[RMDB]
RNA sequence: GGGAACGACUCGAGUAGAGUCGAAAACAGUCACCUGACGCGGGCGCUAACACUAGCCCAACAGCAGCCCUACCUUGCUCGCCGGCAGAACUGGGUCAACCAGCUCGAACGGCACGCGAUGAUGCAGUGAGAAGGACGGAUUCGUCCGUCCUUCUCAAAAAGAAACAACAACAACAAC
Reactivity to DMS in 0.01 (KOAc 150mM, MgCl2 10mM, bicine 150mM(pH8.5), 24C), signal-to-noise 3, nucleotides 027 to 126: c060a130g050u010c000a030c080c000u030g000a050c220g020c100g020g020g000c030g000c100u020a060a220c090a070c130u000a060g020c030c010c040a070a140c100a040g040c070a070g030c010c000c030u030a080c070c050u000u030g020c030u000c160g000c030c030g030g080c110a210g030a030a050c000u000g000g010g010u030c200a090a260c020c010a010g000c000u000c000g000a030a300c050g000g010c070a080c070g000c070g010a060u000g000a100u020g050c080a120g000
Reactivity to 2A3 in 0.01 (KOAc 150mM, MgCl2 10mM, bicine 150mM(pH8.5), 24C), signal-to-noise 3, nucleotides 027 to 126: c040a010g090u070c030a060c010c010u070g040a060c050g000c050g060g020g000c020g030c090u070a080a000c030a040c100u060a040g040c000c010c010a010a000c020a000g090c000a020g000c000c000c000u090a090c010c000u040u050g010c010u030c050g030c020c000g080g000c120a020g000a030a010c010u000g010g030g110u230c070a110a090c010c000a020g010c010u030c040g000a110a040c010g000g060c000a000c000g000c000g050a110u120g010a010u080g060c060a040g110
This 177-nucleotide RNA was probed chemically with DMS and 2A3.
The data come from the RNA Mapping Database (RMDB), library OK1LIB.
The DMS profile rests on 3,056 reads.